[RMDB]
RNA sequence: GGGAACGACUCGAGUAGAGUCGAAAAACAGACAUUUUGCACCUGCCUGCUGUAGACAAGGUCCAUAAAAUAAAAGUGUUCAGGAAGUCGACCGUUUUUGAACUAGCGUAAGGGAACUUCUUUUAUAGGCCAGCACAGCACUCAUCCUCCUUAUCCACACACGUAAGUGAUUCGUCACUUACGUGUGAAAAGAAACAACAACAACAAC
Reactivity to DMS in 0.01 (KOAc 150mM, MgCl2 10mM, bicine 150mM(pH8.5), 24C), signal-to-noise 2, nucleotides 027 to 156: a040c040a080g010a080c040a120u000u000u000u000g010c040a040c030c040u010g000c010c030u000g030c020u010g010u000a090g020a160c010a070a110g030g010u000c030c010a070u000a020a060a040a110u000a070a100a070a140g010u010g000u010u010c070a070g040g010a060a070g010u000c030g020a080c080c040g010u000u000u010u000u010g020a020a020c080u000a070g020c040g010u000a090a090g000g000g010a080a060c020u010u000c030u010u000u000u000a070u000a110g010g010c020c020a120g030c070a110c050a050g030c000a050c020u000c030a110u000c040c010u000c010c020u000u000a140u000c020c030a210
Reactivity to 2A3 in 0.01 (KOAc 150mM, MgCl2 10mM, bicine 150mM(pH8.5), 24C), signal-to-noise 7, nucleotides 027 to 156: a000c030a000g140a020c060a070u060u080u060u190g020c040a060c030c010u030g030c010c020u030g010c010u020g030u090a060g040a120c090a150a080g030g010u030c010c020a080u130a100a110a040a000u120a030a090a040a020g070u060g050u100u070c030a010g040g040a070a020g070u100c060g080a090c040c020g060u020u010u020u070u170g110a100a070c040u040a040g040c010g070u070a050a070g040g000g030a020a010c000u100u090c000u010u100u010u020a110u070a060g020g000c000c000a010g020c030a010c000a020g010c010a030c030u040c010a070u040c000c030u040c000c020u050u050a040u050c050c000a030